[RMDB]
RNA sequence: GGGAACGACUCGAGUAGAGUCGAAAAUGUAAGUCCCAGCUACUUGGGAGGCUGAGGUGGGAGGAUUGCUUGAGCCCAGGAGGUCAAGGCUACAGUGAACUGUGAUGGUGCCACUGCACUCCAGCAUGGGCGACAGAGCAAGACUGUCUGAAAAACAGGAGAACUAUAUGUUCGCAUAUAGUUCUCCAAAAGAAACAACAACAACAAC
Reactivity to 2A3 in 0.01 (KOAc 150mM, MgCl2 10mM, bicine 150mM(pH8.5), 24C), signal-to-noise 2, nucleotides 027 to 156: u190g080u110a040a100g070u030c050c020c020a000g060c030u160a160c040u100u100g000g000g020a090g020g010c040u060g020a040g010g120u140g020g000g010a020g000g010a020u000u100g000c030u000u030g010a000g000c000c010c000a020g000g040a010g000g000u040c070a040a070g020g040c040u050a040c010a070g000u050g160a130a070c040u060g040u070g100a120u150g050g040u070g050c070c010a050c030u070g000c000a030c060u000c040c000a040g080c040a050u090g020g000g000c010g020a020c020a010g110a000g000c000a010a030g010a040c020u030g000u150c050u070g070a100a110a070a010a020c210a070
Reactivity to DMS in 0.01 (KOAc 150mM, MgCl2 10mM, bicine 150mM(pH8.5), 24C), signal-to-noise 1, nucleotides 027 to 156: u020g010u020a150a180g000u000c000c000c000a130g020c040u000a130c030u000u010g040g020g000a110g050g000c060u000g000a090g060g000u000g020g000g030a110g020g000a130u000u010g000c000u000u040g000a200g000c010c020c000a200g010g010a150g000g000u000c070a030a170g070g060c030u000a010c000a050g000u010g000a130a050c010u000g040u000g010a110u000g030g040u000g000c030c040a000c030u010g040c000a110c040u000c010c000a080g000c070a220u000g000g000g000c000g000a100c050a170g010a060g020c020a050a100g000a140c040u000g020u010c030u000g010a060a090a100a110a160c090a240

Background:
Structure probing data (2A3 and DMS) for a 207-nucleotide construct. DMS adducts were read by reverse transcription with MarathonRT. For 2A3, 1,130 sequencing reads were counted.